RNA sequence: GGGAACGACUCGAGUAGAGUCGAAAACCCCAAGCACUGUUUUGGUGAUGAGGGCAAGUACCUAUAGGGCAGUGUUUUGCACCUCUGAGAGUGGAGUGGCUCCCUUUGUGGGCUUGGUCCUAGUCUGCCUACUUCAUCGGUUCGCCGAUGAAGUAGGAAAAGAAACAACAACAACAAC
Reactivity to 2A3 in 0.01 (KOAc 150mM, MgCl2 10mM, bicine 150mM(pH8.5), 24C), signal-to-noise 1, nucleotides 027 to 126: c020c030c000c020a070a030g050c010a000c120u090g040u180u110u080u180g000g010u030g050a030u070g020a040g000g020g010c020a000a010g000u040a140c010c000u010a020u050a040g020g000g000c080a040g030u000g070u070u080u100u250g020c030a040c000c030u070c070u090g210a180g000a070g210u190g040g030a040g030u060g030g000c010u020c010c030c000u000u030u050g020u060g000g020g000c000u020u030g020g010u030c000c000u010a030g040u000c030u000g050
Reactivity to DMS in 0.01 (KOAc 150mM, MgCl2 10mM, bicine 150mM(pH8.5), 24C), signal-to-noise 1, nucleotides 027 to 126: c060c000c020c160a090a130g010c080a050c060u000g020u020u000u010u000g010g010u010g000a040u010g010a060g030g000g020c030a010a010g000u010a030c010c020u000a020u000a060g020g010g010c210a030g010u000g010u020u000u020u000g020c040a030c110c010u010c070u010g000a210g000a110g010u000g000g010a010g030u010g000g000c010u000c010c000c010u000u000u000g000u010g000g000g030c040u000u000g020g000u000c000c010u000a120g030u000c020u010g010
This 177-nucleotide RNA was probed chemically with 2A3 and DMS.
The reactions ran in a buffer of 150 mM KOAc, 10 mM MgCl2 and 150 mM bicine (pH 8.5), at 24 C.
It was measured as part of the RMDB library RFMREP.
The DMS profile rests on 1,179 reads.